[RMDB]
Structure probing data (DMS and 2A3) for a 177-nucleotide construct. For 2A3, 18,839 sequencing reads were counted. For DMS the reverse transcriptase was MarathonRT. Source: RMDB library TTRDES, as collected in RNAgym.
RNA sequence: GGGAACGACUCGAGUAGAGUCGAAAAGAUAUGGAUCUUAUGAUCCCGAUAAGCAGCUAUCGGAAACGAUAGGCUGCUUUUGACGGGAGAGUAAGAUCCUAAGUCAAAAGGUAACUUCGGUUACCAAUCAAUAUAGAUUGUUCGCAAUCUAUAUUGAAAAAGAAACAACAACAACAAC
Reactivity to DMS in 0.01 (KOAc 150mM, MgCl2 10mM, bicine 150mM(pH8.5), 24C), signal-to-noise 9, nucleotides 027 to 126: g000a050u010a300u010g020g000a000u000c000u000u000a010u000g000a300u010c000c000c000g000a140u000a010a010g020c000a010g000c000u000a000u000c000g010g010a180a110a230c010g010a010u000a020g030g010c000u000g010c000u000u000u000u000g010a220c110g000g010g000a020g000a300g010u010a000a010g010a000u000c000c000u000a000a080g020u010c040a080a070a100a120g010g000u000a000a010c000u000u010c240g030g000u000u010a010c000c000a090a100
Reactivity to 2A3 in 0.01 (KOAc 150mM, MgCl2 10mM, bicine 150mM(pH8.5), 24C), signal-to-noise 4, nucleotides 027 to 126: g030a000u070a020u190g000g000a000u000c000u010u000a010u060g020a030u020c000c000c000g070a100u020a130a010g000c010a000g000c010u010a010u010c010g060g040a130a040a050c050g000a010u020a040g200g030c010u000g000c010u010u010u010u010g020a010c010g000g010g010a020g000a010g030u010a000a000g000a000u000c000c000u000a010a000g020u000c020a020a020a050a230g010g000u010a010a000c010u080u170c300g110g000u010u000a000c000c000a000a050